[RMDB]
RNA sequence: GGGAACGACUCGAGUAGAGUCGAAAAGAUGAUCUGGUGGUCAUUGUGUCGAAGUCCGGCGCCACUGAGGAGCUGCUUCGCUUGGUCCCCUACGCAAAGGCCAAGGGAGCGAAGCUGGUGGCGGUGAAACUAUGUCUGGGUUCGCCCAGACAUAGUUAAAAGAAACAACAACAACAAC
Reactivity to 2A3 in 0.01 (KOAc 150mM, MgCl2 10mM, bicine 150mM(pH8.5), 24C), signal-to-noise 3, nucleotides 027 to 126: g020a020u070g000a010u020c070u300g160g150u270g050g010u100c010a020u030u090g050u020g050u090c070g050a070a030g080u010c030c000g060g060c010g020c000c000a000c010u030g050a090g140g120a030g040c010u010g000c010u040u010c070g120c300u000u020g000g000u090c040c100c000c030u090a080c140g050c100a080a060a020g010g000c000c000a030a000g010g010g000a010g000c000g020a070a000g000c020u010g010g010u000g000g000c070g030g010u030g030a050
Reactivity to DMS in 0.01 (KOAc 150mM, MgCl2 10mM, bicine 150mM(pH8.5), 24C), signal-to-noise 4, nucleotides 027 to 126: g010a030u000g010a050u000c020u010g030g030u010g010g000u000c020a050u010u010g010u000g020u000c070g010a110a180g000u000c040c030g010g010c010g010c010c000a010c020u000g010a140g020g010a070g010c040u010g000c000u000u000c010g000c010u010u000g010g000u000c010c040c020c050u000a140c240g010c240a100a080a110g010g000c000c010a010a040g010g000g010a010g000c000g010a080a160g000c010u000g010g010u000g000g000c010g000g010u000g000a130
This 177-nucleotide RNA was probed chemically with 2A3 and DMS. 2A3 adducts were read by reverse transcription with SuperScript II with manganese. Source: RMDB library OK2TRN, as collected in RNAgym.